This 207-nucleotide RNA was probed chemically with 2A3 and DMS. For DMS, 1,903 sequencing reads were counted. For 2A3 the reverse transcriptase was SuperScript II with manganese. Reactivities are given for positions 27 through 156. Conditions: 150 mM KOAc, 10 mM MgCl2 and 150 mM bicine (pH 8.5), 24 C. Reactivities are rounded to 0.1 and cut off at 0 and 3.

RNA sequence: GGGAACGACUCGAGUAGAGUCGAAAAUCCGACUCUCAUAGGCUCUCCAACCCAACUCCUACUCAAUACGUCGUCGUCGUACAGAACGGUAACAUGUUUUCCGAACAUCCGCGCUUGGGUAUACGAGAAAGGCGUAGAUUAUUCGUAAUCUACGCAAGACACAUACGCAGUUCGCUGCGUAUGUGUCAAAAGAAACAACAACAACAAC
Reactivity to 2A3 in 0.01 (KOAc 150mM, MgCl2 10mM, bicine 150mM(pH8.5), 24C), signal-to-noise 4, nucleotides 027 to 156: u090c040c010g040a040c010u010c000u020c040a090u080a110g070g050c010u000c010u040c040c020a060a050c000c050c010a020a100c030u030c020c010u040a040c010u020c040a100a060u090a150c040g030u030c010g010u010c010g030u020c010g010u150a100c020a050g080a100a010c020g030g020u110a090a020c030a060u130g050u030u080u020u020c050c020g030a060a030c000a100u040c020c030g030c000g010c080u030u020g020g020g000u060a030u040a050c050g010a010g070a120a070a010g060g000c000g000u000a000g000a000u000u010a010u040u060c110g040u060a000a000u000c000u010a000c000g000c000a000a000
Reactivity to DMS in 0.01 (KOAc 150mM, MgCl2 10mM, bicine 150mM(pH8.5), 24C), signal-to-noise 1, nucleotides 027 to 156: u000c060c020g000a060c030u000c000u010c050a150u000a190g000g000c000u000c020u000c000c060a110a120c020c000c010a060a190c010u000c080c030u010a060c030u010c030a030a120u010a070c030g020u000c020g010u000c050g010u000c040g000u000a130c070a070g020a070a120c030g020g000u000a090a090c110a070u000g000u030u010u000u000c060c040g010a090a060c040a080u000c020c000g000c060g000c040u000u000g020g030g000u000a030u010a090c030g010a150g010a050a090a120g000g020c000g010u000a000g030a040u000u000a040u000u010c300g050u000a010a010u000c010u000a010c000g040c000a000a010